[RMDB]
RNA sequence: GGGAACGACUCGAGUAGAGUCGAAAAGCUACACUCGGCGGGCACCCCGGCCACGCUAGGCCCCGGUCUCGAGGAGUUACGGGCCGCGAAGCUGUACCUCCCAUCUGACUGACUAAGUUUGGCCUAAACUUCCUCUCAAUUUCGAUUGAGAGGAAGUAAAAGAAACAACAACAACAAC
Reactivity to 2A3 in 0.01 (KOAc 150mM, MgCl2 10mM, bicine 150mM(pH8.5), 24C), signal-to-noise 1, nucleotides 027 to 126: g000c010u060a030c020a030c050u020c010g050g000c010g010g050g000c030a080c000c000c030c000g050g000c020c010a070c010g030c010u020a040g040g000c020c050c050c020g030g000u000c020u010c050g140a110g000g020a020g020u030u060a040c070g040g040g000c010c010g060c090g060a030a010g080c020u010g020u040a030c000c000u010c000c020c000a070u040c090u070g010a010c000u030g010a010c020u030a090a030g000u010u050u070g010g010c020c030u030a130a100
Reactivity to DMS in 0.01 (KOAc 150mM, MgCl2 10mM, bicine 150mM(pH8.5), 24C), signal-to-noise 4, nucleotides 027 to 126: g010c030u000a090c110a070c060u000c030g030g020c030g000g000g010c060a150c050c020c010c120g010g000c010c020a050c070g010c060u000a150g020g010c040c040c120c070g000g010u000c010u000c060g000a180g010g000a060g010u000u000a050c080g020g010g020c010c030g010c160g000a110a180g020c040u000g000u000a030c090c030u000c010c020c030a120u000c090u000g000a060c040u000g000a060c050u000a100a080g000u000u000u000g020g000c010c010u000a060a140

Structure probing data (2A3 and DMS) for a 177-nucleotide construct. Values cover nucleotides 27 to 126. The RNA was probed in 150 mM KOAc, 10 mM MgCl2 and 150 mM bicine (pH 8.5) at 24 C. For 2A3, 2,356 sequencing reads were counted. DMS adducts were read by reverse transcription with MarathonRT. It was measured as part of the RMDB library OK2TST. For DMS, 4,671 sequencing reads were counted.